[RMDB]
RNA sequence: GGGAACGACUCGAGUAGAGUCGAAAAGCUUACAGGGUGAGCUUGACAAUCCCAUUGACGAUGAUUCAUGGAUUAUAUACCCUGAUUGCAAAGAAGGUGAAGAUGAUACGGGCUUGUUUAAUUUUGAGUAGCGCGUAUUAUUCGUAAUACGCGCUACAAAAGAAACAACAACAACAAC
Reactivity to DMS in 0.01 (KOAc 150mM, MgCl2 10mM, bicine 150mM(pH8.5), 24C), signal-to-noise 1, nucleotides 027 to 126: g000c010u000u000a140c000a060g010g000g020u010g020a010g020c000u010u000g000a130c240a130a170u010c000c000c010a110u000u010g000a110c130g010a080u020g010a110u030u010c040a060u000g000g010a070u000u020a080u010a060u010a010c040c010c030u010g000a190u010u020g000c130a020a030a040g010a090a080g000g020u000g000a070a080g000a120u010g000a050u010a040c110g000g000g000c080u020u000g010u010u000u010a030a080u000u000u000u000g010a300
Source: RMDB library OK2TST, as collected in RNAgym. This 177-nucleotide RNA was probed chemically with DMS. The reactions ran in a buffer of 150 mM KOAc, 10 mM MgCl2 and 150 mM bicine (pH 8.5), at 24 C. Values cover nucleotides 27 to 126. High DMS reactivity at an A or C suggests that its Watson-Crick edge is free. For DMS, 1,307 sequencing reads were counted.